An RNA of 207 nucleotides, treated with DMS and read out base by base. In probing experiments dimethyl sulfate is read out at A N1 and C N3, which are open when not base-paired. The RNA was probed in 150 mM KOAc, 10 mM MgCl2 and 150 mM bicine (pH 8.5) at 24 C. Reactivities are given for positions 27 through 156. For DMS the reverse transcriptase was MarathonRT.

[RMDB]
RNA sequence: GGGAACGACUCGAGUAGAGUCGAAAAGCUCGUCUGGCGAAACCGACGAAGCGAAUGGCCGGCCUCAUGAAAAAAACGGGCAUGGAGUUUUUUGAUGCACAAGGCAAGAUGAAAAGUAUGCCGGAACUCGUUGCGGAAAUAGAAAAAGGAACAAAAGCUAUUGUCCCUCAUUCGUGAGGGACAAUAGAAAAGAAACAACAACAACAAC
Reactivity to DMS in 0.01 (KOAc 150mM, MgCl2 10mM, bicine 150mM(pH8.5), 24C), signal-to-noise 1, nucleotides 027 to 156: g020c010u000c000g040u000c030u070g150g030c030g010a190a160a300c040c010g010a080c000g000a050a040g090c040g000a160a000u010g040g070c010c010g020g020c030c020u000c020a050u000g010a000a020a170a090a110a020a210c010g000g010g010c100a090u020g000g010a050g000u000u000u000u000u000u040g000a070u000g000c040a080c040a130a070g000g000c000a070a110g020a300u000g010a110a090a110a080g010u010a120u020g000c000c020g050g000a100a130c040u000c010g000u000u000g000c050g000g010a030a050a080u000a100g000a010a010a060a120a130g010g010a110a090c010a040a100a090a190g000
Overview
It was measured as part of the RMDB library OK3TST.